Source information:
This 177-nucleotide RNA was probed chemically with 2A3 and DMS. Values cover nucleotides 27 to 126. DMS adducts were read by reverse transcription with MarathonRT.
[RMDB]
RNA sequence: GGGAACGACUCGAGUAGAGUCGAAAAUUUGAUCGAGCCCACCCACAGCGGCUGAUCCGUCGGGCGUCCCUGCCCAUAGGUGGCCAACAACGCCUCGGCUUAAAAGCUGCGAAGUUCGCUUCGCAGCCUCUAUAUUCCAGUUCGCUGGAAUAUAGAGAAAAGAAACAACAACAACAAC
Reactivity to 2A3 in 0.01 (KOAc 150mM, MgCl2 10mM, bicine 150mM(pH8.5), 24C), signal-to-noise 3, nucleotides 027 to 126: u030u020u110g020a020u010c060g080a010g030c020c010c000a050c000c050c010a110c050a060g070c070g090g030c010u010g020a020u020c000c030g050u020c020g020g020g000c000g010u040c040c010c000u010g010c020c000c020a030u140a050g040g060u100g050g030c060c020a060a050c020a030a000c040g030c000c030u200c040g000g000c040u040u110a080a120a070a010g000c000u000g000c000g000a000a010g010u040u100c210g020c090u000u010c000g000c000a000g000c000
Reactivity to DMS in 0.01 (KOAc 150mM, MgCl2 10mM, bicine 150mM(pH8.5), 24C), signal-to-noise 3, nucleotides 027 to 126: u000u010u010g000a090u000c050g010a080g010c020c000c050a160c050c020c030a110c170a110g020c070g010g020c050u010g000a050u000c020c230g020u000c080g020g010g000c030g020u000c040c080c080u000g000c000c000c040a150u000a050g020g010u010g010g000c040c080a090a110c140a090a100c050g010c020c010u000c050g020g020c050u010u000a060a060a090a130g010c000u010g020c000g020a000a010g010u000u010c220g010c000u010u000c010g010c000a010g000c010